An RNA of 207 nucleotides, treated with DMS and 2A3 and read out base by base.
Conditions: 150 mM KOAc, 10 mM MgCl2 and 150 mM bicine (pH 8.5), 24 C.
RNA sequence: GGGAACGACUCGAGUAGAGUCGAAAAGUGUAUAGGCUUUCCGAGACCCCGCCUAUACACGAGUUAAGGGGUCAGGUCAUGUUAUGCUGGCUAUCUUACGUGUGCACCGAAGGGCUGCGGGUGCACACGAAUCUUCCGCAGCCCAUUGCCAGCUAGACCACUACUAAUAUUUCGAUAUUAGUAGUGGAAAAGAAACAACAACAACAAC
Reactivity to DMS in 0.01 (KOAc 150mM, MgCl2 10mM, bicine 150mM(pH8.5), 24C), signal-to-noise 1, nucleotides 027 to 156: g010u000g010u010a030u000a000g020g030c050u000u000u020c060c040g010a180g020a040c010c010c010c090g000c050c000u000a020u000a020c020a000c030g010a100g000u010u000a070a100g000g030g050g000u000c010a070g000g020u010c030a070u010g000u020u010a130u010g030c040u010g000g030c010u000a250u020c080u000u000a120c000g010u000g010u000g040c000a010c040c010g000a130a070g010g020g090c020u010g010c030g030g030g010u000g000c030a030c010a020c000g020a010a090u010c100u000u000c080c050g000c000a040g010c000c010c020a240u000u010g010c030c010a080g000c010u010a110g010a300
Reactivity to 2A3 in 0.01 (KOAc 150mM, MgCl2 10mM, bicine 150mM(pH8.5), 24C), signal-to-noise 3, nucleotides 027 to 156: g010u000g000u000a010u000a000g030g000c060u130u220u060c110c060g080a110g040a160c000c000c020c040g010c000c000u000a010u000a010c010a000c020g020a010g020u090u200a110a050g030g000g000g000u010c010a000g030g050u040c030a030u140g060u120u120a070u160g030c000u010g000g000c010u040a100u090c070u080u180a030c010g010u010g000u000g020c020a030c010c030g020a070a120g000g010g000c000u000g000c020g020g000g000u000g010c010a000c000a000c000g000a000a010u060c060u160u010c030c030g000c000a010g000c010c000c020a020u080u100g000c010c000a000g000c010u020a010g020a030